[RMDB]
RNA sequence: GGGAACGACUCGAGUAGAGUCGAAAAUACGGCACUCGUCCUGGGCCUUUUUGGGCCCGGGAACUCCGGCCUCGAAUUGUGGCCUCUAAGUUGCAUGUUUGGCAGCCCAUGUGCCGGACACCGCGGGCAAGCCAUUAGUGUUCGCACUAAUGGCUUGAAAAGAAACAACAACAACAAC
Reactivity to DMS in 0.01 (KOAc 150mM, MgCl2 10mM, bicine 150mM(pH8.5), 24C), signal-to-noise 3, nucleotides 027 to 126: u010a130c030g000g010c020a010c010u010c210g000u000c000c010u000g000g010g000c000c000u000u010u010u010u020g000g010g020c010c000c010g020g000g010a010a020c110u000c170c170g010g010c020c000u010c060g010a120a130u010u020g010u010g010g000c010c000u010c150u010a120a100g020u000u000g010c010a090u000g000u010u010u000g000g010c030a040g000c010c030c060a110u010g010u000g010c010c010g000g000a080c110a150c040c020g000c130g000g000g010
Reactivity to 2A3 in 0.01 (KOAc 150mM, MgCl2 10mM, bicine 150mM(pH8.5), 24C), signal-to-noise 1, nucleotides 027 to 126: u030a010c000g010g000c010a000c030u050c100g030u000c030c000u010g020g010g000c000c000u040u100u080u220u290g030g010g040c000c030c000g000g000g000a000a010c050u110c120c040g020g000c000c000u010c010g110a080a080u280u190g020u040g050g030c020c040u070c070u100a090a110g020u040u030g010c020a040u070g270u300u120u140g100g000c010a020g040c000c010c010a060u110g020u040g010c000c000g010g000a010c060a020c020c000g000c050g110g000g020
Structure probing data (DMS and 2A3) for a 177-nucleotide construct. Source: RMDB library OK2TRN, as collected in RNAgym. The reactions ran in a buffer of 150 mM KOAc, 10 mM MgCl2 and 150 mM bicine (pH 8.5), at 24 C.